Structure probing data (DMS and 2A3) for a 170-nucleotide construct. The reactions ran in a buffer of 150 mM KOAc, 10 mM MgCl2 and 150 mM bicine (pH 8.5), at 24 C.

RNA sequence: GGGAACGACUCGAGUAGAGUCGAAAAAGUGGAUCCGUGGGAAUUAUCCCGUUCCACCCCCGCGGCACACUCCUUCCCCCCUGCGGGCCCCCCCAUAAGAUGGCAGGAACCCACUCAUUGGGGUCCGAUAGCAGGUACUUCGGUACCUGCAAAAGAAACAACAACAACAAC
Reactivity to DMS in 0.01 (KOAc 150mM, MgCl2 10mM, bicine 150mM(pH8.5), 24C), signal-to-noise 4, nucleotides 027 to 129: a030g030u060g020g020a020u000c090c010g020u040g000g040g000a080a130u040u050a070u040c020c000c010g020u020u010c010c040a170c270c170c000c000c040g060c060g010g050c300a090c020a070c070u050c050c100u000u020c000c000c010c020c000c050u010g020c080g000g000g060c080c000c110c010c000c020c010a050u020a040a030g000a040u090g010g020c090a130g010g000a070a030c040c010c000a050c140u030c160a070u080u010g050g000g000g000u030c000c000g040a160u000a000
Reactivity to 2A3 in 0.01 (KOAc 150mM, MgCl2 10mM, bicine 150mM(pH8.5), 24C), signal-to-noise 1, nucleotides 027 to 129: a000g020u000g010g000a050u030c030c020g020u110g000g000g000a040a040u160u080a040u230c000c190c000g030u020u000c020c020a170c000c000c000c000c000g000c000g000g090c130a000c010a000c110u000c050c020u000u010c010c030c000c000c020c020u000g010c000g000g000g000c000c020c000c000c000c000c100a020u050a040a100g090a040u040g010g000c020a030g020g000a000a000c000c000c020a020c000u120c000a090u120u160g010g000g000g000u000c030c000g000a060u070a030